[RMDB]
RNA sequence: GGGAACGACUCGAGUAGAGUCGAAAAUCAACUUGACCGUCUUUCAUGAUGCUGCUCUGCCGCCGGAUGACUUUGUGGCCAACUGCAUCAUCUCCUUCGAGGACCUCAUGCAGAGCGAGACGGCUGAAAUACGAUUAUUAUUCGUAAUAAUCGUAUUAAAAGAAACAACAACAACAAC
Reactivity to 2A3 in 0.01 (KOAc 150mM, MgCl2 10mM, bicine 150mM(pH8.5), 24C), signal-to-noise 9, nucleotides 027 to 126: u080c010a020a090c060u100u170g090a200c010c010g010u010c020u030u140u080c070a100u100g060a050u090g060c040u020g010c000u010c010u050g030c010c030g020c020c010g100g060a100u100g040a120c090u100u110u160g090u080g040g000c030c020a160a260c050u040g000c010a010u010c010a010u000c020u020c010c010u060u140c110g040a150g040g050a070c000c010u060c020a030u140g020c050a010g010a020g050c030g020a010g010a020c000g010g000c010u020g010a010
Reactivity to DMS in 0.01 (KOAc 150mM, MgCl2 10mM, bicine 150mM(pH8.5), 24C), signal-to-noise 9, nucleotides 027 to 126: u030c080a090a130c160u020u010g010a160c000c000g000u000c000u010u010u020c110a090u020g010a060u020g010c040u000g000c030u010c030u000g010c020c170g020c050c090g010g010a080u020g000a100c110u020u010u010g020u000g010g010c040c110a060a100c060u010g000c030a040u000c070a040u010c070u010c020c030u010u020c120g000a120g010g000a100c100c050u020c090a080u020g010c040a040g000a050g020c130g000a040g000a030c020g000g000c020u000g000a090
Source: RMDB library OK1LIB, as collected in RNAgym. Structure probing data (2A3 and DMS) for a 177-nucleotide construct. The RNA was probed in 150 mM KOAc, 10 mM MgCl2 and 150 mM bicine (pH 8.5) at 24 C.